Source information:
Source: RMDB libraries RFM100 and RFMREP, as collected in RNAgym. The record gives the reactivity of an RNA of 177 nucleotides to DMS and 2A3. Reactivities are given for positions 27 through 126. The 2A3 profile rests on 1,301 reads. 2A3 adducts were read by reverse transcription with SuperScript II with manganese.

RNA sequence: GGGAACGACUCGAGUAGAGUCGAAAACAUGUUUUUGUUUAGCUGUGAACAAAGACUUAGACUAAGUGCAAAAAAUAAAUCCUCUUUUGCAACCCAGAACUCAUGGCUCAGUAUGAGUUUUGAUACACAUAGUGGGCAAGUUCGCUUGCCCACUAUGAAAAGAAACAACAACAACAAC
Reactivity to DMS in 0.01 (KOAc 150mM, MgCl2 10mM, bicine 150mM(pH8.5), 24C), signal-to-noise 3, nucleotides 027 to 126: c060a090u010g000u020u000u000u000u010g000u000u000u000a050g010c120u010g010u000g000a040a020c000a000a010a010g010a000c000u000u010a130g000a170c130u010a070a070g030u010g000c010a000a000a030a020a080a040u000a110a050a130u040c100c040u000c100u020u000u000u000g000c000a040a090c120c070c020a080g000a030a020c020u020c000a020u000g000g000c080u010c210a060g000u000a040u000g000a030g000u010u000u000u010g000a100u010a080c170a190
Reactivity to 2A3 in 0.01 (KOAc 150mM, MgCl2 10mM, bicine 150mM(pH8.5), 24C), signal-to-noise 3, nucleotides 027 to 126: c010a020u050g020u000u010u020u010u000g010u010u010u020a080g000c110u110g070u130g230a010a000c000a000a020a040g050a000c020u060u120a050g050a080c040u120a080a040g150u060g090c050a000a030a030a000a080a050u240a010a130a060u060c080c010u060c020u040u060u010u010g010c000a030a120c010c020c010a020g010a030a000c000u000c020a000u030g090g000c000u050c080a060g040u090a060u030g040a030g000u000u000u000u020g070a030u060a020c040a000